[RMDB]
This 177-nucleotide RNA was probed chemically with 2A3 and DMS.

RNA sequence: GGGAACGACUCGAGUAGAGUCGAAAACAGCCUAAGAUCAUGGUUUAGGGUGAUCAGUGCUGGCAGAUAAAUUGAAAAGGCACGCUGGCUUGUGAUCUUAAAUGAGGACAAUCCCCCCAGGGCUGGGACGUCCCUUAAGUUUCGACUUAAGGGACGUAAAAGAAACAACAACAACAAC
Reactivity to 2A3 in 0.01 (KOAc 150mM, MgCl2 10mM, bicine 150mM(pH8.5), 24C), signal-to-noise 1, nucleotides 027 to 126: c020a000g000c000c010u010a070a000g030a000u000c030a010u040g070g230u060u090u300a110g020g090g000u070g080a080u080c020a060g000u030g080c010u000g010g050c020a000g010a210u120a110a140a100u140u060g020a070a000a080a070g000g000c000a000c090g120c010u020g020g000c000u010u150g060u000g050a020u000c000u030u030a050a130a120u170g030a100g040g080a010c040a100a230u080c000c000c010c000c000c000a000g010g000g010c010u030g030g010g010
Reactivity to DMS in 0.01 (KOAc 150mM, MgCl2 10mM, bicine 150mM(pH8.5), 24C), signal-to-noise 2, nucleotides 027 to 126: c040a040g000c020c020u000a090a080g010a060u000c010a020u010g010g010u000u010u000a080g010g000g010u000g010a070u010c050a130g030u020g010c040u000g000g000c090a070g040a120u000a080a050a130u000u000g000a080a070a140a120g000g010c090a060c060g020c030u000g000g000c030u010u010g060u000g010a040u000c000u000u000a000a080a080u000g000a070g000g010a080c090a130a100u020c000c010c000c030c000c020a160g000g000g010c040u000g010g000g020
2A3 adducts were read by reverse transcription with SuperScript II with manganese. For DMS the reverse transcriptase was MarathonRT. The 2A3 profile rests on 876 reads.